[RMDB]
RNA sequence: GGGAACGACUCGAGUAGAGUCGAAAAGAUAUGGAAUCGAAAGGCUUUUGACGCCAUUCGGUUCGGAAACGAACCUAUUUGGCGAUAAGCCUUCGAUUCCUAAGUCAAACCGCCGUUCGCGGCGGAACAAGAGGCAGUAGUUCGCUACUGCCUCUUGAAAAGAAACAACAACAACAAC
Reactivity to 2A3 in 0.01 (KOAc 150mM, MgCl2 10mM, bicine 150mM(pH8.5), 24C), signal-to-noise 3, nucleotides 027 to 126: g010a000u030a020u090g000g000a020a000u010c010g070a100a090a180g050g000c060u080u190u300u300g290a190c210g000c000c000a000u000u030c070g000g000u010u000c000g000g010a020a040a000c000g000a000a000c020c010u040a150u100u110u130g000g040c070g060a060u130a240a010g000c020c000u000u010c000g000a000u010u000c010c000u000a010a000g000u000c010a060a060a160c010c010g070c040c010g030u070u090c300g020c020g150g020c000g000g030a020a050
Reactivity to DMS in 0.01 (KOAc 150mM, MgCl2 10mM, bicine 150mM(pH8.5), 24C), signal-to-noise 3, nucleotides 027 to 126: g010a020u000a300u000g000g000a000a000u000c000g020a020a030a050g000g000c000u000u000u010u010g030a270c120g010c020c000a000u010u010c300g000g000u010u000c000g020g000a060a070a140c000g030a000a020c000c000u000a110u000u000u010g010g010c010g000a150u010a010a010g020c000c000u000u000c000g010a030u000u000c000c000u000a020a070g010u000c040a120a210a230c000c000g010c000c000g020u000u030c290g000c020g000g030c010g010g000a040a050